[RMDB]
RNA sequence: GGGAACGACUCGAGUAGAGUCGAAAAAACCAGAAGUCGCCGAACAAGCCGCUAGAGAGAGUGCCAAAGAGAUAAAGCAAUUAUUAGAAGGGGCAGACUUAGUUUGGGUAGUUGCUGGCAUGGGAGGGACACCAAUUGUAUUCGUACAAUUGGUGUCAAAAGAAACAACAACAACAAC
Reactivity to 2A3 in 0.01 (KOAc 150mM, MgCl2 10mM, bicine 150mM(pH8.5), 24C), signal-to-noise 2, nucleotides 027 to 126: a030a010c050c010a070g020a030a020g050u080c010g010c100c010g020a070a080c030a020a010g030c070c020g050c130u120a000g010a000g000a010g010a010g110u040g040c020c030a140a030a000g150a030g010a090u080a100a090a010g000c020a010a180u080u120a070u150u170a120g040a150a020g050g000g020g040c020a030g010a020c020u040u080a020g070u080u100u110g030g020g000u010a050g020u050u100g000c080u010g000g000c020a030u050g000g000g040a080g040g030
Reactivity to DMS in 0.01 (KOAc 150mM, MgCl2 10mM, bicine 150mM(pH8.5), 24C), signal-to-noise 3, nucleotides 027 to 126: a070a060c000c000a160g010a080a110g020u000c070g030c000c000g000a150a090c060a080a110g010c040c030g000c090u000a060g010a150g020a110g020a050g020u000g000c030c020a030a100a070g000a090g000a050u000a060a090a140g010c070a040a040u010u000a060u010u010a090g020a130a080g020g000g000g020c040a070g020a050c070u000u010a070g000u000u000u000g000g000g000u000a060g000u000u000g000c010u010g000g010c050a050u000g000g020g010a110g000g000
Chemical mapping of a 177-nucleotide RNA with 2A3 and DMS. The RNA was probed in 150 mM KOAc, 10 mM MgCl2 and 150 mM bicine (pH 8.5) at 24 C. The data come from the RNA Mapping Database (RMDB), library OK2TST.